RNA sequence: GGGAACGACUCGAGUAGAGUCGAAAAGUAGCCCACUUAAAGAUAGUGCAACGAACGAAAUUCGACUGUACUUUCUGGCCAUAUCUCGUUGGAAGCACUAUGUUAGGGAUAUCUGUUUCUAUGAAAACUAGUAUUAAAUAUUCGUAUUUAAUACUAGAAAAGAAACAACAACAACAAC
Reactivity to 2A3 in 0.01 (KOAc 150mM, MgCl2 10mM, bicine 150mM(pH8.5), 24C), signal-to-noise 2, nucleotides 027 to 126: g100u100a050g040c000c000c030a060c040u040u150a080a040a000g130a030u010a000g010u000g000c000a000a030c070g160a010a000c020g010a020a030a060u090u050c060g030a010c030u050g020u170a100c010u210u250u090c110u080g000g010c020c010a080u070a020u140c040u000c010g030u010u030g130g000a040a010g000c000a000c000u000a030u030g110u040u030a030g000g000g020a030u010a110u140c070u070g010u020u030u000c060u040a120u080g060a040a170a050a100
Reactivity to DMS in 0.01 (KOAc 150mM, MgCl2 10mM, bicine 150mM(pH8.5), 24C), signal-to-noise 4, nucleotides 027 to 126: g010u010a130g000c000c000c020a150c150u000u000a050a030a080g000a010u000a000g020u000g000c000a030a300c020g010a010a020c010g010a010a040a100u000u000c140g020a020c020u000g010u010a140c260u000u010u020c130u010g030g000c020c020a130u000a030u000c040u000c000g010u000u000g000g010a040a300g000c000a010c010u000a000u000g010u010u000a050g000g000g000a060u000a070u000c100u000g010u000u000u000c010u000a140u010g000a110a110a120a200